[RMDB]
RNA sequence: GGGAACGACUCGAGUAGAGUCGAAAAUGAAAGUAGUCUCCUGCAGCGUCUGGGGUUUCCGUUGCACUCCUCGGAACCAGGACCUCGGCGUGGCCUAGCGAGUUAUGGCGACGAAGGCCGUGAAAAACGGUACUAAUAAGUUCGCUUAUUAGUACCGAAAAGAAACAACAACAACAAC
Reactivity to DMS in 0.01 (KOAc 150mM, MgCl2 10mM, bicine 150mM(pH8.5), 24C), signal-to-noise 9, nucleotides 027 to 126: u010g010a100a080a110g010u000a060g010u000c030u000c020c020u000g010c100a140g010c090g000u000c020u000g020g010g000g010u000u000u000c020c050g010u010u000g000c110a100c110u000c040c020u000c050g010g000a060a070c080c050a200g010g000a050c060c010u000c020g010g010c040g010u000g010g000c010c030u000a140g010c050g010a090g010u000u010a080u010g010g010c010g010a090c060g010a130a090g010g010c010c010g010u000g000a050a040a070a080a130
Reactivity to 2A3 in 0.01 (KOAc 150mM, MgCl2 10mM, bicine 150mM(pH8.5), 24C), signal-to-noise 6, nucleotides 027 to 126: u160g020a050a050a040g070u130a020g030u020c020u000c030c010u040g050c050a050g010c010g030u000c020u130g080g000g040g000u010u070u020c020c010g020u050u080g030c110a060c110u090c020c010u010c000g030g000a040a040c040c000a040g030g050a030c000c010u000c010g030g010c020g030u050g020g000c000c010u030a030g030c020g030a010g010u110u130a130u200g120g010c010g000a100c030g010a120a020g050g000c020c030g040u090g080a090a060a000a010a010

Source: RMDB library M2PK90, as collected in RNAgym.
The record gives the reactivity of an RNA of 177 nucleotides to DMS and 2A3.
In probing experiments dimethyl sulfate is read out at A N1 and C N3, which are open when not base-paired.
Values cover nucleotides 27 to 126.
For DMS the reverse transcriptase was MarathonRT.